[RMDB]
RNA sequence: GGGAACGACUCGAGUAGAGUCGAAAAGAUUUACCUGACCAUGUCGGUGCAGAUGAUUGCGGCAAUGGUCGAUACCUACGUGCCGCUGUUCGGUCAGCGACUGGGACACCUGACCCCGGUGGCAGCCCGAUUUAGUGGGGUUCGCCCCACUAAAUCGAAAAGAAACAACAACAACAAC
Reactivity to 2A3 in 0.01 (KOAc 150mM, MgCl2 10mM, bicine 150mM(pH8.5), 24C), signal-to-noise 3, nucleotides 027 to 126: g040a020u160u130u190a130c040c060u060g000a000c010c000a000u040g040u060c030g140g100u110g100c070a030g070a300u210g050a130u230u250g060c020g030g020c030a050a160u020g020g000u020c000g010a030u140a140c000c030u030a050c060g070u050g010c010c030g000c020u030g030u060u220c040g020g010u010c000a000g030c020g080a030c050u060g030g050g000a030c010a010c020c010u020g010a010c030c000c000c030g020g000u000g000g010c000a010g030c010c020
Reactivity to DMS in 0.01 (KOAc 150mM, MgCl2 10mM, bicine 150mM(pH8.5), 24C), signal-to-noise 3, nucleotides 027 to 126: g010a150u000u000u000a040c040c010u010g030a040c000c000a030u010g010u010c020g020g030u010g000c060a100g020a160u010g000a190u010u000g020c020g020g020c010a050a070u000g010g010u000c140g000a040u010a050c170c030u000a060c230g010u000g020c000c010g010c010u010g000u010u000c150g010g000u010c000a060g000c060g030a030c080u000g000g000g000a130c130a120c050c010u010g000a060c020c010c130c050g010g000u000g010g020c020a060g020c090c080

Conditions: 150 mM KOAc, 10 mM MgCl2 and 150 mM bicine (pH 8.5), 24 C. Structure probing data (2A3 and DMS) for a 177-nucleotide construct. DMS adducts were read by reverse transcription with MarathonRT. The data come from the RNA Mapping Database (RMDB), library OK2TST.